[RMDB]
This 177-nucleotide RNA was probed chemically with 2A3 and DMS.
RNA sequence: GGGAACGACUCGAGUAGAGUCGAAAACAAAAACGGAUUGUGUCUGUAAUCACAACAAACAAAAACAAAGGGAUUGUGUCCCUAAUCACAAAAACAAAACAAAAAGGAUUGUGUCCGUAAUCACAAAAUGAUGAUUACGAUUCGUCGUAAUCAUCAUAAAAGAAACAACAACAACAAC
Reactivity to 2A3 in 0.01 (KOAc 150mM, MgCl2 10mM, bicine 150mM(pH8.5), 24C), signal-to-noise 7, nucleotides 027 to 126: c030a010a050a020a010a020c060g040g040a140u040u040g010u000g050u030c090u130g180u150a070a110u160c040a030c010a050a070c050a050a190a010c070a000a130a030a020a010c100a050a160a050g010g030g030a050u040u040g020u010g130u250c000c010c000u070a030a060u070c040a000c010a040a070a020a010a000c070a040a060a020a010c070a030a100a040a030a020g080g030a060u020u050g000u000g010u030c020c000g090u100a040a090u100c020a010c010a040a110a020
Reactivity to DMS in 0.01 (KOAc 150mM, MgCl2 10mM, bicine 150mM(pH8.5), 24C), signal-to-noise 4, nucleotides 027 to 126: c020a070a100a040a100a120c090g020g000a070u000u020g010u000g010u000c100u030g000u010a100a100u050c100a040c100a040a060c280a100a110a080c140a050a110a160a080a060c160a140a170a090g020g020g000a070u000u010g000u000g000u010c000c000c010u020a000a050u070c150a040c080a000a010a030a070a090c250a040a000a060a140c140a100a130a050a120a100g000g010a110u010u010g020u000g010u000c070c020g020u010a030a010u030c050a030c050a050a060a060

Values are in units of 0.01, from 0 to 300, in steps of 10. It was measured as part of the RMDB library OK1LIB. The 2A3 profile rests on 5,856 reads. The RNA was probed in 150 mM KOAc, 10 mM MgCl2 and 150 mM bicine (pH 8.5) at 24 C. The DMS profile rests on 4,743 reads.